[RMDB]
RNA sequence: GGGAACGACUCGAGUAGAGUCGAAAAAAAAGAUAUGGACCAAGCUAAUACGUAUUGGGAGGAAUGAAUCUCGGAAACGAGAUACAUUCCGACGAUCAAUACGGAUAACUUGGUCCUAAGUCAAAAAUCGUUACAUGAAGUUCGCUUCAUGUAACGAAAAAGAAACAACAACAACAAC
Reactivity to DMS in 0.01 (KOAc 150mM, MgCl2 10mM, bicine 150mM(pH8.5), 24C), signal-to-noise 2, nucleotides 027 to 126: a070a030a060a090g010a030u000a020u010g000g030a040c000c000a000a000g000c010u000a290a120u010a020c000g010u000a010u000u000g000g020g010a000g010g000a030a010u000g000a260a060u000c000u010c000g040g010a000a000a020c000g020a010g010a010u010a070c000a000u000u000c000c000g000a040c300g000a010u020c000a000a000u000a000c010g010g000a040u000a130a110c000u000u000g000g030u020c000c030u000a000a040g000u000c000a050a040a100a060a080